[RMDB]
RNA sequence: GGGAACGACUCGAGUAGAGUCGAAAACGGUCUCAUCUUACCUGGUUCAAAGGUAUCGUCGACCUGAACCUCUAUGCAUACCUGAGUUUUCAUCAGUAAACAUCAGCAAAACAGCAUAGAACGCAGCGAUGAUGACCGUAUUCGUACGGUCAUCAUCAAAAGAAACAACAACAACAAC
Reactivity to 2A3 in 0.01 (KOAc 150mM, MgCl2 10mM, bicine 150mM(pH8.5), 24C), signal-to-noise 7, nucleotides 027 to 126: c040g020g000u000c010u010c040a140u040c050u030u030a020c000c000u040g110g000u250u160c070a110a110a050g010g000u010a030u040c070g070u020c050g000a020c000c000u010g010a020a020c000c000u010c000u010a000u010g000c000a030u030a140c010c000u010g010a020g020u000u000u010u060c180a300u080c060a040g020u160a010a010a000c020a280u040c000a000g020c070a010a060a010a190c040a020g000c010a000u010a000g010a040a020c160g040c110a110g080c030
Reactivity to DMS in 0.01 (KOAc 150mM, MgCl2 10mM, bicine 150mM(pH8.5), 24C), signal-to-noise 4, nucleotides 027 to 126: c230g020g010u000c000u010c210a040u020c080u000u010a000c030c000u000g000g000u080u020c300a030a070a020g030g000u000a020u000c220g030u020c280g000a000c010c000u010g020a200a130c030c010u000c000u000a000u000g000c000a100u010a160c300c030u000g010a020g000u010u000u000u040c120a180u080c200a160g010u020a000a010a030c000a070u000c010a030g000c170a010a060a150a090c280a100g000c000a000u000a000g000a040a150c210g030c200a080g000c300